[RMDB]
RNA sequence: GGGAACGACUCGAGUAGAGUCGAAAACGAUCAGUACGUUCGCGUACUGAUCGAAGCUACUGGAGACAGUAGCAAGUCGCAGACCUUAUUUGGCGGUAAUAAGGAAACCAUUUAGUAGGCUGGUCUAAAUGACUGCGACGACCGCCAUCCAGCCUUAUAGUAUGAAAGGAUUCGUCCUUUCAUACUAAAAAGAAACAACAACAACAAC
Reactivity to 2A3 in 0.01 (KOAc 150mM, MgCl2 10mM, bicine 150mM(pH8.5), 24C), signal-to-noise 3, nucleotides 027 to 156: c010g000a010u000c000a000g000u000a000c010g020u030u060c210g000c010g080u000a000c000u000g000a000u000c000g000a000a000g010c000u000a000c000u000g010g020a020g010a020c000a000g000u000a000g000c000a000a000g000u000c000g000c000a000g000a010c000c000u000u000a000u000u050u100g050g030c030g030g010u050a010a000u010a010a000g020g000a060a050a010c080c000a010u000u000u000a030g000u010a060g020g000c000u010g000g010u000c010u000a000a000a000u000g010a000c000u000g000c000g000a000c000g010a040c040c030g050c020c000a010u020c000c000a000g000c000c000u010u040a060
Reactivity to DMS in 0.01 (KOAc 150mM, MgCl2 10mM, bicine 150mM(pH8.5), 24C), signal-to-noise 2, nucleotides 027 to 156: c030g000a010u000c000a000g020u000a000c000g020u000u000c300g020c020g060u000a010c000u000g000a000u000c060g000a010a060g030c000u000a010c000u010g000g020a300g000a300c010a000g000u000a000g000c000a000a000g000u000c000g000c000a000g000a010c000c000u000u000a000u000u000u010g000g000c050g030g030u000a080a020u010a040a060g010g000a110a120a210c140c020a070u000u000u000a050g050u000a060g020g020c010u000g010g020u000c010u000a000a010a000u000g000a020c030u000g000c000g000a010c000g010a090c050c050g000c110c040a110u000c010c000a040g000c000c000u000u000a130
The record gives the reactivity of an RNA of 207 nucleotides to 2A3 and DMS. 2A3 is a SHAPE reagent: it acylates the 2'-hydroxyl of flexible nucleotides of all four kinds. For DMS, 7,082 sequencing reads were counted.